[RMDB]
RNA sequence: GGGAACGACUCGAGUAGAGUCGAAAAGAUUGGUUUUCCAUUGGUAGGAGGGGGGCACUAACCGAUAGUCAGCCAAACUGGAGUUUUGCUCCCCUGAAUAAGGGGGUAGAGGGCAUCGAUAGCGUCGGAUGACGACCUUGUUCGCAAGGUCGUCAUCAAAAGAAACAACAACAACAAC
Reactivity to DMS in 0.01 (KOAc 150mM, MgCl2 10mM, bicine 150mM(pH8.5), 24C), signal-to-noise 1, nucleotides 027 to 126: g020a160u000u000g000g000u010u000u000u000c000c030a080u000u000g010g020u000a070g020g010a090g050g000g090g000g000g000c050a030c170u000a040a070c010c030g020a210u010a030g020u000c040a140g020c120c140a030a110a060c040u000g010g000a150g000u000u000u000u000g000c020u000c000c000c020c010u000g000a060a060u020a060a100g000g010g010g020g000u000a030g000a100g000g000g000c020a040u000c050g060a130u000a050g000c070g010u000c100g010